Chemical mapping of a 177-nucleotide RNA with 2A3 and DMS. 2A3 adducts were read by reverse transcription with SuperScript II with manganese. The reactions ran in a buffer of 150 mM KOAc, 10 mM MgCl2 and 150 mM bicine (pH 8.5), at 24 C. For DMS the reverse transcriptase was MarathonRT. It was measured as part of the RMDB library M2PK90.
RNA sequence: GGGAACGACUCGAGUAGAGUCGAAAAAUAGAGCGCGCGAAUUGGAAACCAGGGAACCAUAUUACGCGCGCAAGGAACCGGGCCUUGGUUCCUUGCAAAGAUUAGAUAAUUACCCGGUUCCCGAUAAUAGACUACAAUUAUUCGUAAUUGUAGUCUAAAAAGAAACAACAACAACAAC
Reactivity to 2A3 in 0.01 (KOAc 150mM, MgCl2 10mM, bicine 150mM(pH8.5), 24C), signal-to-noise 2, nucleotides 027 to 126: a000u100a040g090a010g060c040g000c010g000c020g020a020a070u050u030g050g020a090a080a050c100c070a220g010g000g000a000a010c020c000a000u030a010u230u090a080c010g020c010g000c000g000c010a000a000g000g000a000a010c010c040g000g180g060c030c040u060u100g040g020u000u000c000c020u020u010g040c030a020a070a050g060a070u120u140a020g020a090u110a130a090u150u050a070c010c000c040g000g000u000u020c020c000c000g010a000u030a060a040
Reactivity to DMS in 0.01 (KOAc 150mM, MgCl2 10mM, bicine 150mM(pH8.5), 24C), signal-to-noise 3, nucleotides 027 to 126: a060u000a100g000a220g020c040g020c010g030c040g010a050a220u000u000g000g000a080a120a070c050c050a100g000g010g000a150a130c010c010a040u000a080u000u000a070c030g010c000g000c050g000c010a000a000g000g000a000a010c010c020g010g010g020c150c130u000u010g010g000u000u000c010c000u010u000g000c060a090a090a160g000a100u010u010a080g010a130u000a040a030u010u010a140c010c010c010g000g000u000u000c000c000c010g010a050u010a030a120